[RMDB]
RNA sequence: GGGAACGACUCGAGUAGAGUCGAAAAGGCGGCUGCUAUUUGAUGACAGGGUAUGGCGCAUUGCUCACUGUCUGUUUGGCUGUAUCCGGAACACACUUUCAUUCAUGGAGUGCUGUUUUAUCACAAAAUCGCACGCUACCUUCGGGUAGCGUGCGAUAAAAGAAACAACAACAACAAC
Reactivity to 2A3 in 0.01 (KOAc 150mM, MgCl2 10mM, bicine 150mM(pH8.5), 24C), signal-to-noise 1, nucleotides 027 to 126: g060g000c030g000g000c090u000g000c000u030a010u180u130u220g300a300u000g060a000c060a060g040g000g000u120a090u010g000g060c060g010c180a060u000u090g030c060u070c120a120c090u090g000u120c000u010g100u040u160u100g090g000c000u000g060u060a070u000c000c040g000g070a070a000c000a040c000a000c000u070u080u160c040a090u020u090c010a150u190g070g000a070g000u000g150c180u000g050u000u050u000u080a090u000c120a000c000a090a000a070